[RMDB]
RNA sequence: GGGAACGACUCGAGUAGAGUCGAAAACCCAUAUGUUCGCAUAUGGGGAAAUUCCUAAGUCCGAGGGUUCCCUCGCGAAGAACUGUAUCGGAAACGAUACAGGGAGCGAGAACACCCGAUGAGGAUAUGGAUAUGAAUUCGGUCUUCGGACCGAAAAUUCUAAUUCUAGCUUCGGCUAGAAUUAGAAAAAAGAAACAACAACAACAAC
Reactivity to DMS in 0.01 (KOAc 150mM, MgCl2 10mM, bicine 150mM(pH8.5), 24C), signal-to-noise 1, nucleotides 027 to 156: c020c010c010a020u000a030u000g000u020u000c300g120c050a000u000a000u030g090g030g000g000a020a050a150u000u000c020c010u000a120a190g050u010c010c000g010a150g000g000g030u000u010c050c080c000u010c000g020c020g030a090a150g030a140a260c000u000g000u000a030u000c000g010g020a270a150a300c030g000a000u000a000c000a000g000g000g020a210g010c000g020a020g000a100a120c030a060c020c010c040g000a130u000g000a280g000g000a160u000a170u000g000g000a280u000a120u010g000a100a260u010u010c000g010g020u010c000u000u000c300g060g000a030c010c020g000a000a000a030a100
Reactivity to 2A3 in 0.01 (KOAc 150mM, MgCl2 10mM, bicine 150mM(pH8.5), 24C), signal-to-noise 1, nucleotides 027 to 156: c000c000c000a000u020a000u010g010u010u090c200g020c170a000u010a010u000g000g030g000g020a000a030a170u080u010c030c000u080a130a050g060u020c000c000g010a050g050g000g000u020u030c030c010c010u000c030g010c010g110a200a030g000a030a000c000u000g000u000a000u000c010g020g000a110a050a050c000g000a000u000a000c010a000g010g000g010a000g010c010g000a010g030a080a010c000a000c020c020c020g020a050u020g060a030g030g030a000u020a080u160g060g000a070u150a080u300g060a040a120u230u060c000g000g000u000c000u000u040c180g060g010a000c000c020g000a010a030a000a010
The record gives the reactivity of an RNA of 207 nucleotides to DMS and 2A3. It was measured as part of the RMDB library RNAMAK. Reactivities are given for positions 27 through 156. The reactions ran in a buffer of 150 mM KOAc, 10 mM MgCl2 and 150 mM bicine (pH 8.5), at 24 C.